[RMDB]
RNA sequence: GGGAACGACUCGAGUAGAGUCGAAAAGGGCCAUGUACCUAUCCAAAAUGAGAUCCCAUCUUGCACACUGUGCUAAUUUGAGAUUCUCAUGCCUCCCACUUGGAGAGAUCUGGACUAGAAGUCAGGGAAUAGGUCGUUUCUUUCGAGAAACGACCAACUCUUUGUAAUAGUUCGCUAUUACAAAGAGAAAAGAAACAACAACAACAAC
Reactivity to DMS in 0.01 (KOAc 150mM, MgCl2 10mM, bicine 150mM(pH8.5), 24C), signal-to-noise 3, nucleotides 027 to 156: g010g020g010c020c050a090u000g000u010a020c030c030u010a100u000c030c030a060a050a110a040u000g010a050g010a080u010c000c010c010a020u010c100u000u000g020c000a040c030a220c140u010g040u000g020c020u020a020a040u000u000u000g010a010g000a040u010u000c010u000c000a030u000g010c090c040u000c030c010c050a170c140u000u000g010g000a070g000a150g010a050u010c050u000g000g010a050c040u000a080g010a090a140g000u000c020a060g010g010g010a110a130u000a100g020g020u000c000g030u000u000u000c000u000u010u000c300g000a060g020a010a020a010c010g010a010c000c000a010a020
Reactivity to 2A3 in 0.01 (KOAc 150mM, MgCl2 10mM, bicine 150mM(pH8.5), 24C), signal-to-noise 9, nucleotides 027 to 156: g040g000g000c060c040a090u130g040u130a080c020c020u050a070u100c030c020a080a060a010a050u020g000a000g000a010u000c010c010c000a010u010c020u010u030g020c000a020c040a080c180u300g000u000g000c040u110a040a070u000u010u020g030a030g000a020u300u050c000u010c010a010u050g040c000c020u010c000c010c000a100c080u050u140g030g010a040g010a010g000a070u020c030u060g040g010a020c020u040a070g040a200a020g100u040c040a020g030g020g050a060a090u080a190g010g000u000c010g000u000u000u000c010u030u050u060c120g050a010g000a010a000a000c000g000a000c000c000a000a000
This 207-nucleotide RNA was probed chemically with DMS and 2A3.
Reactivities are given for positions 27 through 156.
The RNA was probed in 150 mM KOAc, 10 mM MgCl2 and 150 mM bicine (pH 8.5) at 24 C.
DMS adducts were read by reverse transcription with MarathonRT.